This 177-nucleotide RNA was probed chemically with 2A3 and DMS.
The 2A3 profile rests on 9,250 reads.
2A3 adducts were read by reverse transcription with SuperScript II with manganese.
DMS adducts were read by reverse transcription with MarathonRT.
Reactivities are rounded to 0.1 and cut off at 0 and 3.
Reactivities are given for positions 27 through 126.

RNA sequence: GGGAACGACUCGAGUAGAGUCGAAAACCUGUUGACUUCGGUCAACAGGAAAAGGUGGAUGGUACGCUACCGAAGUAGCAAAAGUGCAGAAGGAACGCACAAAAACUUAUCCGUUCGCGGAUAAGAACAUAUAUGGUUCCUUCGGGAACCAUAUAUGAAAAGAAACAACAACAACAAC
Reactivity to 2A3 in 0.01 (KOAc 150mM, MgCl2 10mM, bicine 150mM(pH8.5), 24C), signal-to-noise 5, nucleotides 027 to 126: c000c010u000g000u010u000g000a010c010u030u020c270g080g000u000c010a010a000c000a010g000g010a010a070a010a020g100g030u110g050g060a160u060g050g060u110a030c100g000c010u010a020c010c060g100a150a020g020u060a000g010c020a000a030a080a080g030u030g000c030a030g050a130a040g120g020a060a040c050g020c030a000c040a020a070a010a020a040c010u010u000a000u010c010c010g010u020u050c260g000c010g080g000a000u000a000a000g010a040a000
Reactivity to DMS in 0.01 (KOAc 150mM, MgCl2 10mM, bicine 150mM(pH8.5), 24C), signal-to-noise 6, nucleotides 027 to 126: c000c000u000g010u010u000g010a010c000u000u010c190g030g010u010c000a000a000c000a000g020g000a020a020a060a090g020g020u010g000g010a100u010g020g030u000a050c140g000c020u000a020c030c080g010a050a100g010u010a030g000c040a040a050a070a100g020u000g000c020a100g000a120a090g000g000a060a070c300g010c050a020c090a060a050a060a070a120c000u000u010a000u000c000c000g010u000u020c180g010c010g000g000a000u000a000a010g000a090a130

The reactions ran in a buffer of 150 mM KOAc, 10 mM MgCl2 and 150 mM bicine (pH 8.5), at 24 C.